[RMDB]
The record gives the reactivity of an RNA of 177 nucleotides to DMS and 2A3. The 2A3 profile rests on 1,666 reads.
RNA sequence: GGGAACGACUCGAGUAGAGUCGAAAAAGGGCUGGGCCAUCGCGCAUAUCGAUGAAGACUGGACCAUCGAGCAUUGGGGUUCCGAUGCCGAGGCAAUCGAACGCCGCAAGAACCGCGAGAUCGAGAAAGCAUCGGAUAAUUUCGAUUAUCCGAUGCUAAAAGAAACAACAACAACAAC
Reactivity to DMS in 0.01 (KOAc 150mM, MgCl2 10mM, bicine 150mM(pH8.5), 24C), signal-to-noise 3, nucleotides 027 to 126: a100g010g010g010c050u000g010g010g000c050c050a050u010c060g000c060g020c140a110u010a080u000c020g010a040u000g000a120a120g000a070c070u010g000g010a100c060c010a090u020c040g010a100g020c060a060u010u010g000g020g020g030u010u000c020c020g000a010u000g000c010c060g000a080g010g000c050a070a060u010c110g010a070a130c160g000c030c030g040c090a110a070g010a070a080c140c030g010c050g000a070g000a060u000c030g000a120g010a120a110
Reactivity to 2A3 in 0.01 (KOAc 150mM, MgCl2 10mM, bicine 150mM(pH8.5), 24C), signal-to-noise 2, nucleotides 027 to 126: a000g100g020g030c010u060g000g040g010c030c010a050u030c000g020c010g030c070a020u080a050u250c050g000a020u030g030a050a040g090a080c060u020g020g010a070c010c010a050u040c020g020a020g020c000a020u060u050g020g000g040g170u300u170c020c010g030a020u020g000c000c020g000a020g020g000c020a010a040u040c000g030a100a030c050g030c020c020g020c010a020a030g050a050a020c030c000g000c040g020a030g000a080u080c010g000a010g070a130a160

Notes: Values are in units of 0.01, from 0 to 300, in steps of 10. It was measured as part of the RMDB library OK2TST. For DMS the reverse transcriptase was MarathonRT.